Structure probing data (DMS) for a 177-nucleotide construct. For DMS the reverse transcriptase was MarathonRT.
RNA sequence: GGGAACGACUCGAGUAGAGUCGAAAAUGUUUGCAAUUCGUUGCAAACAAACUACCGAGAACGUUGCUCGGUAUAAACAGCGAACCCUAGGAAACAAGGGAACUAUGGAACGCUUCGGCGUUCCAAAGGUAGUCCCAAGUUUCGACUUGGGACUACCAAAAGAAACAACAACAACAAC
Reactivity to DMS in 0.01 (KOAc 150mM, MgCl2 10mM, bicine 150mM(pH8.5), 24C), signal-to-noise 1, nucleotides 027 to 126: u000g040u000u010u000g000c020a030a060u000u000c210g060u010u000g000c000a000a030a000c040a100a110a060c220u020a080c000c000g030a040g010a110a100c150g020u000u000g060c010u010c020g000g000u000a000u010a070a040a150c130a080g000c180g000a080a140c020c010c000u000a110g000g000a120a130a130c050a090a180g000g000g010a050a080c090u000a090u000g000g000a000a000c000g000c000u000u000c110g000g020c000g010u000u000c000c000a020a010a010